[RMDB]
RNA sequence: GGGAACGACUCGAGUAGAGUCGAAAAAUGGGCCCUACCGGGUUACUGACCUUAGCCAAACUCCGAAUGCCGGUAAGUGAGAGCGCGGCAGUGAGACUGUGGGGGAUAAGCUCCAUGGUCGAGAGGGAUCCGCUUAGAAUUUCGAUUCUAAGCGGAUAAAAGAAACAACAACAACAAC
Reactivity to DMS in 0.01 (KOAc 150mM, MgCl2 10mM, bicine 150mM(pH8.5), 24C), signal-to-noise 3, nucleotides 027 to 126: a100u020g000g010g010c020c030c000u000a100c160c100g000g000g020u000u000a070c120u000g000a160c010c020u000u000a110g040c050c050a090a170a110c030u010c010c020g000a150a050u000g010c030c030g010g010u010a090a090g020u000g000a100g010a070g020c020g010c250g000g000c020a050g000u020g000a160g000a020c000u000g030u000g010g000g010g000g000a190u010a080a150g020c020u000c010c000a010u000g010g020u000c010g010a080g000a050g000g000g000
Reactivity to 2A3 in 0.01 (KOAc 150mM, MgCl2 10mM, bicine 150mM(pH8.5), 24C), signal-to-noise 2, nucleotides 027 to 126: a000u040g030g000g040c010c000c000u030a070c030c020g000g000g090u040u060a050c040u120g150a190c000c000u030u100a030g090c050c020a070a050a040c030u030c020c040g060a170a110u110g090c050c000g100g040u060a080a100g090u080g080a130g000a000g080c030g000c050g060g000c010a020g000u040g060a100g010a020c000u000g020u040g010g010g000g060g030a100u100a270a020g100c000u000c020c000a000u010g010g000u000c030g000a020g010a030g070g010g010

An RNA of 177 nucleotides, treated with DMS and 2A3 and read out base by base.
For DMS, 2,499 sequencing reads were counted.
Values are in units of 0.01, from 0 to 300, in steps of 10.
DMS adducts were read by reverse transcription with MarathonRT.